[RMDB]
RNA sequence: GGGAACGACUCGAGUAGAGUCGAAAACAGUCAACGUGAAGGCGGGCCAGACCAUCGCCGCAUUCUACCAGAGCACCGUCAUGAUCUUUGGCACGAUGGCUCGCUACAUACCCAGAGUUAGGGAAAAACUCCGAUGAUAGUUCGCUAUCAUCGGAGUAAAAGAAACAACAACAACAAC
Reactivity to DMS in 0.01 (KOAc 150mM, MgCl2 10mM, bicine 150mM(pH8.5), 24C), signal-to-noise 3, nucleotides 027 to 126: c100a110g010u000c080a040a080c120g010u000g030a150a110g020g000c010g010g000g010c030c020a110g010a160c090c090a060u020c070g000c030c030g000c100a060u010u000c080u000a120c070c060a060g020a030g010c090a060c050c070g000u010c110a050u000g000a030u000c020u000u000u000g010g020c080a050c100g000a140u010g000g010c000u010c050g030c020u000a060c090a060u010a140c030c010c010a140g010a100g020u000u000a090g000g000g000a040a040a060a070
Reactivity to 2A3 in 0.01 (KOAc 150mM, MgCl2 10mM, bicine 150mM(pH8.5), 24C), signal-to-noise 2, nucleotides 027 to 126: c010a000g110u080c030a050a040c070g070u090g130a160a050g070g040c000g000g010g030c000c060a010g050a090c060c010a080u070c060g010c040c030g010c010a040u160u040c010u090a080c000c070a000g000a010g100c030a020c130c040g120u120c040a060u130g080a100u010c030u040u040u060g020g000c060a000c120g080a060u040g000g000c010u010c010g000c000u020a010c000a020u130a040c000c010c010a020g030a010g080u160u220a060g000g000g000a100a070a000a000
Notes: Structure probing data (DMS and 2A3) for a 177-nucleotide construct. The RNA was probed in 150 mM KOAc, 10 mM MgCl2 and 150 mM bicine (pH 8.5) at 24 C. For 2A3, 2,135 sequencing reads were counted. It was measured as part of the RMDB library OK2TRN.